[RMDB]
RNA sequence: GGGAACGACUCGAGUAGAGUCGAAAAUGAAAGACAAACGAAGGACAAAGGAAAAUACCAUAACACAUGAAUAAGGGAAAAAGGAAAACCAAGGAAACCAACCAAUACGAAAGGAAUUAAAGAAAAAUCAUCUUCUACUGUUCGCAGUAGAAGAUGAAAAAGAAACAACAACAACAAC
Reactivity to DMS in 0.01 (KOAc 150mM, MgCl2 10mM, bicine 150mM(pH8.5), 24C), signal-to-noise 1, nucleotides 027 to 126: u000g070a080a070a090g000a040c070a100a070a110c150g000a040a030g020g000a010c010a100a120a050g070g000a050a030a100a040u030a070c060c010a000u000a110a050c080a110c050a000u000g000a040a070u030a020a060g000g000g000a010a100a000a060a080g030g000a040a020a100a090c000c070a060a060g000g000a070a010a040c060c030a000a120c070c010a060a060u000a080c090g000a010a030a030g030g000a090a110u010u010a050a010a080g030a050a030a110a060a040
Chemical mapping of a 177-nucleotide RNA with DMS. Reactivities are given for positions 27 through 126. Conditions: 150 mM KOAc, 10 mM MgCl2 and 150 mM bicine (pH 8.5), 24 C. The DMS profile rests on 593 reads.